[RMDB]
RNA sequence: GGGAACGACUCGAGUAGAGUCGAAAAAAGCGGAGGGCCUGAGGAAACCUGUAGCUUCAAUCAUGUCUGGUAACCGGGUGCCUGAGCCCCAAUCUGGGUUGUGAGGAAAUAGGGGAGAGGUAUCCUGGGCCACAUCCCAGCCUAACACCUGUGAGGAAGCAUUAUCACCUUUCGAGGUGAUAAUGCUAAAAGAAACAACAACAACAAC
Reactivity to 2A3 in 0.01 (KOAc 150mM, MgCl2 10mM, bicine 150mM(pH8.5), 24C), signal-to-noise 2, nucleotides 027 to 156: a000a000g040c050g030g090a040g060g000g010c060c030u090g020a070g010g000a020a070a050c020c020u060g080u120a070g040c000u020u040c020a070a180u070c040a060u140g050u020c070u040g050g000u040a070a090c000c020g000g000g050u010g000c030c000u050g010a050g080c050c000c010c020a020a070u000c080u090g170g110g000u080u070g040u120g140a080g040g030a040a140a140u130a270g000g010g000g000a080g000a010g080g000u010a050u130c010c010u000g000g020g010c000c000a010c000a000u000c000c000c000a020g000c000c000u060a090a010c030a040c020c060u060g040u070g060a030g030g090a090
Chemical mapping of a 207-nucleotide RNA with 2A3. It was measured as part of the RMDB library OK3TST.